The data come from the RNA Mapping Database (RMDB), library OK3TST. An RNA of 207 nucleotides, treated with DMS and 2A3 and read out base by base. DMS adducts were read by reverse transcription with MarathonRT. The DMS profile rests on 3,960 reads. Values are in units of 0.01, from 0 to 300, in steps of 10. The RNA was probed in 150 mM KOAc, 10 mM MgCl2 and 150 mM bicine (pH 8.5) at 24 C.

RNA sequence: GGGAACGACUCGAGUAGAGUCGAAAAUUAGCUAUGAGCCUAUCUGCCCCUAGUAGCCCUGACACGCUCUAACUCCAAAACUUGAUGAUGUGUGUAGACCUUUUUAGAAAUAACCCUGUGAGUCACUUCUGUCUGGCUAUCGAUACACACACCAUCAUACGAUGAUUUAGUUCGCUAAAUCAUCGUAAAAAGAAACAACAACAACAAC
Reactivity to DMS in 0.01 (KOAc 150mM, MgCl2 10mM, bicine 150mM(pH8.5), 24C), signal-to-noise 2, nucleotides 027 to 156: u000u000a090g010c030u000a080u010g010a100g010c000c050u010a140u000c040u000g020c020c010c010c080u020a120g000u010a110g030c000c070c030u010g010a130c070a050c050g020c030u000c050u010a090a140c030u010c040c020a050a060a100a120c130u010u000g030a030u000g030a020u010g000u000g000u030g020u010a020g000a110c020c020u020u000u000u000u000a120g000a030a050a060u000a040a070c020c010c020u000g010u010g010a170g000u000c010a020c040u000u000c030u010g000u000c030u000g010g030c020u010a080u010c070g030a220u000a020c000a020c020a020c000a020c000c000a000u000c000a200
Reactivity to 2A3 in 0.01 (KOAc 150mM, MgCl2 10mM, bicine 150mM(pH8.5), 24C), signal-to-noise 4, nucleotides 027 to 156: u070u030a010g030c050u040a050u170g040a050g050c020c030u090a110u120c060u100g050c000c010c030c010u010a030g050u040a000g060c020c020c030u030g010a010c020a010c060g030c010u030c020u040a070a060c030u030c070c030a040a080a140a160c040u050u050g000a010u000g000a020u000g010u000g000u000g000u010a030g040a060c020c010u090u130u020u050u180a070g030a040a090a040u110a050a070c030c000c000u050g060u050g090a020g030u040c020a010c050u120u070c030u080g140u020c020u020g010g000c010u040a060u170c020g030a010u020a020c000a000c000a000c000a000c000c010a010u020c000a000